[RMDB]
This 177-nucleotide RNA was probed chemically with DMS and 2A3. The RNA was probed in 150 mM KOAc, 10 mM MgCl2 and 150 mM bicine (pH 8.5) at 24 C. DMS (dimethyl sulfate) methylates the pairing face of unpaired adenines and cytosines. Values cover nucleotides 27 to 126. The DMS profile rests on 2,419 reads. 2A3 is a SHAPE reagent: it acylates the 2'-hydroxyl of flexible nucleotides of all four kinds.
RNA sequence: GGGAACGACUCGAGUAGAGUCGAAAAUUCGAUCGCGAGCAGCAAAAGGAAUAUAUGAUUCCUAUUGUAAUCAAAGACCAUGGUUCCCCGGCAAUGACUGGAACUAGUACUCUGACCGUCAUAAUUGUCGUAGCCAAUUAUUCGUAAUUGGCUACGAAAAAGAAACAACAACAACAAC
Reactivity to DMS in 0.01 (KOAc 150mM, MgCl2 10mM, bicine 150mM(pH8.5), 24C), signal-to-noise 4, nucleotides 027 to 126: u000u010c080g000a050u010c050g020c240g000a080g010c140a200g010c020a030a020a140a030g010g020a010a030u000a220u020a150u010g000a060u000u000c000c010u000a100u000u010g010u010a070a170u000c060a050a170a110g000a030c030c020a040u000g000g020u010u000c010c000c010c150g010g010c080a050a040u000g010a030c040u010g060g000a070a080c090u000a020g010u000a060c160u000c060u000g020a120c030c030g010u000c050a020u010a100a110u010u000g000
Reactivity to 2A3 in 0.01 (KOAc 150mM, MgCl2 10mM, bicine 150mM(pH8.5), 24C), signal-to-noise 3, nucleotides 027 to 126: u050u020c040g010a020u080c030g000c030g060a010g010c100a000g000c000a040a000a000a060g020g000a020a010u050a010u050a090u300g230a050u060u000c000c000u020a080u030u050g040u060a060a050u040c010a010a120a030g010a070c030c030a050u080g030g060u020u040c000c000c000c000g040g000c030a030a090u060g030a050c020u110g000g000a080a030c020u030a090g080u070a090c040u030c040u120g060a140c020c020g020u040c060a040u130a210a100u120u150g090